[RMDB]
Chemical mapping of a 177-nucleotide RNA with 2A3 and DMS.
The 2A3 profile rests on 2,593 reads.
The RNA was probed in 150 mM KOAc, 10 mM MgCl2 and 150 mM bicine (pH 8.5) at 24 C.
2A3 adducts were read by reverse transcription with SuperScript II with manganese.
RNA sequence: GGGAACGACUCGAGUAGAGUCGAAAACAGUUACACUUCGGUGUAACUGACAGGCGAUCCCAGCAUCAACAACAACUACAGGGAGAUGCAUCCCUAACGCCAAAACCGCGCGCUUCGGCGCGCGGAAUAUCCAAUUAUUGUUCGCAAUAAUUGGAUAAAAAGAAACAACAACAACAAC
Reactivity to 2A3 in 0.01 (KOAc 150mM, MgCl2 10mM, bicine 150mM(pH8.5), 24C), signal-to-noise 2, nucleotides 027 to 126: c000a000g010u010u010a010c000a000c010u060u100c230g150g000u000g000u000a000a000c000u020g000a020c030a030g030g020c010g030a060u010c020c030c000a000g040c000a020u070c020a020a140c000a010a000c000a020a080c060u270a100c190a160g110g000g000a100g010a080u090g020c000a090u030c000c010c010u020a050a020c020g060c030c000a020a050a040a070c030c020g000c000g100c000g050c030u030u090c260g070g030c040g050c030g040c000g000g000a010a010
Reactivity to DMS in 0.01 (KOAc 150mM, MgCl2 10mM, bicine 150mM(pH8.5), 24C), signal-to-noise 1, nucleotides 027 to 126: c020a010g000u000u040a010c010a010c000u000u000c200g040g010u000g050u010a000a000c010u000g000a060c280a080g000g000c020g010a130u000c030c040c000a140g030c050a020u010c010a150a100c070a050a040c100a030a090c290u000a140c230a050g000g000g020a070g010a060u000g020c040a070u000c020c010c000u000a110a130c010g000c010c030a090a020a030a180c000c030g130c000g070c000g140c030u000u000c120g000g060c060g100c000g040c130g000g000a030a010

For DMS the reverse transcriptase was MarathonRT. It was measured as part of the RMDB library M2PK50.